Structure probing data (DMS) for a 177-nucleotide construct.
RNA sequence: GGGAACGACUCGAGUAGAGUCGAAAAAUCUUGGCGAAGUCAGCGCGGAAGGAGCGCGCAACUCCUUACCCUCGCCUUUUUUUUUCCGCUCCCGUUCGCGAAUGCGUUCAGCGGAAAAGGGACCAAAUCCUCUGCUUAGUUUCGACUAAGCAGAGGAAAAAGAAACAACAACAACAAC
Reactivity to DMS in 0.01 (KOAc 150mM, MgCl2 10mM, bicine 150mM(pH8.5), 24C), signal-to-noise 1, nucleotides 027 to 126: a020u000c090u000u000g010g040c000g040a020a080g000u030c170a080g000c100g000c230g070g020a050a040g010g000a060g010c030g000c290g020c120a090a060c010u010c020c020u000u020a120c110c020c010u000c010g000c000c000u000u040u000u000u040u000u000u030u000c000c020g000c050u000c150c040c100g000u010u000c020g010c000g030a100a050u000g000c000g040u000u000c050a050g010c000g000g000a000a000a010a010g010g010g010a070c110c120a050a060a070